[RMDB]
RNA sequence: GGGAACGACUCGAGUAGAGUCGAAAAUCGAUGGCGUUCGCGCCAUCGAAGAGCCGUACCGCGUAGCUCGCGGAUAGGAGUGAAGAUAUCCAAGGCCAUGGAGGAGGCGUGCUUUCGAGCACGCCAAUAUUCCAACACCAUUCGUGGUGUUGGAAUAAAAAGAAACAACAACAACAAC
Reactivity to 2A3 in 0.01 (KOAc 150mM, MgCl2 10mM, bicine 150mM(pH8.5), 24C), signal-to-noise 2, nucleotides 027 to 126: u010c000g020a000u000g000g000c020g000u010u050c290g030c000g000c090c000a000u000c000g010a000a000g010a040g040c000c000g020u090a060c020c010g020c020g000u020a030g080c070u090c080g000c000g010g020a020u130a030g090g020a050g040u130g090a090a070g040a180u100a050u140c010c010a010a060g050g010c040c000a060u070g100g000a010g010g090a060g000g000c020g010u010g000c010u100u080u100c150g050a020g000c010a010c010g000c000c010a000a000
Reactivity to DMS in 0.01 (KOAc 150mM, MgCl2 10mM, bicine 150mM(pH8.5), 24C), signal-to-noise 3, nucleotides 027 to 126: u000c010g020a010u000g000g010c000g040u000u010c210g020c040g050c010c000a010u000c000g010a030a080g000a120g020c020c010g020u000a180c020c000g030c030g000u000a210g000c180u000c030g040c080g010g010a100u000a050g010g010a110g020u000g010a060a090g000a100u000a090u000c020c020a060a110g000g000c030c020a170u000g000g020a090g020g030a160g000g000c000g000u000g020c000u010u000u000c200g010a020g020c000a000c000g020c000c010a010a010
Overview
An RNA of 177 nucleotides, treated with 2A3 and DMS and read out base by base. The DMS profile rests on 2,016 reads. The data come from the RNA Mapping Database (RMDB), library M2PK50. DMS adducts were read by reverse transcription with MarathonRT.